[RMDB]
RNA sequence: GGGAACGACUCGAGUAGAGUCGAAAAUAGACUGGUAAUUACAAAGUGCCCUAGGAGGCUAGGAGGACUGACCAAGAGAGAAGGGAAAGCAUUUUGUUCUGACCAUAAUGACAUAAGGAGUUCAUUUCAAUCAGUCUUAGUUCGCUAAGACUGAUUGAAAAGAAACAACAACAACAAC
Reactivity to 2A3 in 0.01 (KOAc 150mM, MgCl2 10mM, bicine 150mM(pH8.5), 24C), signal-to-noise 5, nucleotides 027 to 126: u100a010g150a030c070u020g000g010u020a040a050u070u060a030c040a010a030a000g020u020g010c010c000c020u030a060g060g050a080g080g130c040u060a040g030g000a030g020g070a090c030u080g060a080c030c020a090a030g080a000g000a020g030a100a120g010g040g000a060a060a010g020c010a020u000u010u010u010g010u020u020c000u020g020a020c000c000a020u090a130a120u120g060a020c050a060u150a090a120g140g010a120g030u030u020c010a040u030u010u000
Reactivity to DMS in 0.01 (KOAc 150mM, MgCl2 10mM, bicine 150mM(pH8.5), 24C), signal-to-noise 1, nucleotides 027 to 126: u040a060g000a130c130u000g000g010u050a010a040u000u000a000c050a030a060a050g000u000g000c000c000c030u010a000g000g000a070g000g080c000u050a000g000g000a030g000g000a050c050u000g010a170c000c050a170a060g000a140g060a160g000a220a100g000g000g000a080a060a160g010c120a160u000u010u050u000g000u000u040c050u000g050a040c020c000a020u080a030a040u030g010a070c110a110u060a120a030g000g010a190g020u050u040c010a200u000u000u000